[RMDB]
RNA sequence: GGGAACGACUCGAGUAGAGUCGAAAAGCGGCCAGGUCCCCCCGCGGACCUUCACCUGCCAGAUGACGUGGCAUCGCGACUCCGUGACGUUCUCGCGACGCAAUGCCACCGGGCUGGCCCUGGUGCUGCCGCGGCCAACCAUCACCAUGGAAUUUGGUCCAUUUCAAUCGUUCGCGAUUGAAAUGGAAAAAGAAACAACAACAACAAC
Reactivity to DMS in 0.01 (KOAc 150mM, MgCl2 10mM, bicine 150mM(pH8.5), 24C), signal-to-noise 1, nucleotides 027 to 156: g050c070g050g050c050c140a040g020g040u000c000c000c030c100c080c110g040c060g020g010a020c040c020u000u000c030a000c020c000u010g070c000c010a020g020a040u000g030a090c030g040u000g030g010c000a040u000c010g050c010g010a080c010u010c170c000g030u020g020a050c120g010u000u020c020u010c020g040c000g020a300c000g000c020a030a020u000g040c020c020a000c000c030g000g020g000c020u000g030g000c070c080c040u020g010g020u000g030c180u000g040c000c020g010c050g000g050c000c070a080a120c020c040a110u000c040a060c030c060a180u000g000g010a190a200u000u000u000g000g000
Reactivity to 2A3 in 0.01 (KOAc 150mM, MgCl2 10mM, bicine 150mM(pH8.5), 24C), signal-to-noise 1, nucleotides 027 to 156: g050c020g040g030c080c140a030g010g010u010c020c020c020c000c040c030g000c140g000g000a030c020c020u020u040c010a000c000c010u030g060c000c000a020g030a080u040g090a090c030g000u010g000g000c000a020u020c020g030c010g090a120c040u070c110c010g000u000g010a040c180g070u190u170c080u010c030g000c000g030a070c000g020c020a000a000u000g000c000c000a000c010c080g000g060g000c000u000g010g000c000c010c110u010g000g020u000g060c090u140g000c000c000g000c000g010g010c020c000a000a030c030c000a050u130c020a020c080c020a030u040g050g160a110a130u220u060u040g090g000